[RMDB]
RNA sequence: GGGAACGACUCGAGUAGAGUCGAAAAGUGGCCGUCGACAACGAGGGCACGACCUCGCUGACGAUCACCGACACUGACUUGCUGGUAAACGGCGAGUUCGUCCAGCCCGACGGGACGGUCGUCGACGCUCCUAGUCGCAUUUCGAUGCGACUAGGAGAAAAGAAACAACAACAACAAC
Reactivity to 2A3 in 0.01 (KOAc 150mM, MgCl2 10mM, bicine 150mM(pH8.5), 24C), signal-to-noise 4, nucleotides 027 to 126: g090u090g010g000c020c000g000u010c000g010a140c040a180a010c030g030a040g000g000g020c000a000c010g020a030c010c000u000c000g000c000u030g030a110c160g110a150u160c090a030c020c010g080a040c080a040c100u140g150a130c080u140u240g070c090u120g060g020u040a120a150a000c030g000g020c000g000a000g000u000u030c010g010u040c140c060a010g000c010c000c000g130a210c010g000g000g000a000c000g010g000u000c000g000u060c010g030a050c060g000
Reactivity to DMS in 0.01 (KOAc 150mM, MgCl2 10mM, bicine 150mM(pH8.5), 24C), signal-to-noise 4, nucleotides 027 to 126: g030u000g000g010c000c000g020u010c010g020a150c160a130a100c190g000a300g020g010g010c030a120c030g020a000c030c000u000c000g000c000u000g000a190c230g000a090u010c220a010c050c000g010a090c030a050c190u020g000a150c290u010u010g020c000u040g000g000u040a000a110a080c000g000g000c000g020a000g000u000u000c010g000u010c230c200a090g000c000c000c010g010a260c120g000g000g000a010c000g000g000u000c000g000u020c040g020a180c200g020